Structure probing data (2A3 and DMS) for a 177-nucleotide construct. For DMS, 948 sequencing reads were counted. DMS adducts were read by reverse transcription with MarathonRT. For 2A3, 1,702 sequencing reads were counted. DMS (dimethyl sulfate) methylates the pairing face of unpaired adenines and cytosines.
RNA sequence: GGGAACGACUCGAGUAGAGUCGAAAAGAUAUGGAUCCAUAGCAAGGCGAUCGGAAACGAUUCGCUGAUGACCUAUCGGAUCCUAAGUCAAAACUGCUGAAGAAGCGUUCGCGCUUCUUCAGCAGAAGAAUUGCAACGUGUUCGCACGUUGCAAUUCAAAAGAAACAACAACAACAAC
Reactivity to 2A3 in 0.01 (KOAc 150mM, MgCl2 10mM, bicine 150mM(pH8.5), 24C), signal-to-noise 1, nucleotides 027 to 126: g040a010u060a040u100g010g010a000u000c000c020a020u000a020g050c030a130a300g000g000c000g040a000u000c020g000g080a120a050a000c000g000a030u300u290c050g000c010u060g040a050u110g000a010c020c040u000a030u040c210g030g010a000u010c000c000u020a140a060g080u030c030a000a010a120a170c030u000g000c010u000g010a010a000g000a000a000g030c040g020u060u070c300g000c020g040c100u000u000c010u000u020c000a070g000c000a000g000a010a010
Reactivity to DMS in 0.01 (KOAc 150mM, MgCl2 10mM, bicine 150mM(pH8.5), 24C), signal-to-noise 1, nucleotides 027 to 126: g000a010u010a300u020g030g000a010u000c000c000a000u010a000g000c040a030a190g000g040c000g000a050u000c040g000g000a050a080a290c010g010a020u020u000c020g010c000u000g000a060u010g000a030c300c000u000a020u000c220g020g000a010u000c010c000u000a010a090g000u000c000a050a150a090a140c000u000g000c020u000g000a000a000g010a010a010g000c010g010u000u000c170g000c000g000c010u000u000c000u000u000c000a000g000c010a000g000a010a020